The data come from the RNA Mapping Database (RMDB), library OK2TRN. The record gives the reactivity of an RNA of 177 nucleotides to DMS. For DMS, 888 sequencing reads were counted. The RNA was probed in 150 mM KOAc, 10 mM MgCl2 and 150 mM bicine (pH 8.5) at 24 C.

[RMDB]
RNA sequence: GGGAACGACUCGAGUAGAGUCGAAAAGUGGUCUGGCAGAUCCAAAUGCAGUUUGGGGAAUGACACAGGCAGCACCGGAGCUGGUGCACUGGUUGCUAAAACUUGGAGUUAAAUUUAACAUGAGUGGAACCCUGAUACGCUUCGGCGUAUCAGGGUUAAAAGAAACAACAACAACAAC
Reactivity to DMS in 0.01 (KOAc 150mM, MgCl2 10mM, bicine 150mM(pH8.5), 24C), signal-to-noise 1, nucleotides 027 to 126: g070u000g020g020u010c000u000g030g020c030a020g000a140u000c040c040a010a000a070u010g030c110a120g010u000u000u000g010g000g000g000a110a120u010g010a040c100a080c000a080g000g030c060a150g000c000a060c020c000g010g020a140g060c060u010g000g030u000g010c010a060c050u000g010g000u000u000g010c020u020a070a100a060a040c050u000u000g000g020a190g000u010u000a060a180a140u000u010u010a050a050c040a040u020g000a050g010u000g000g020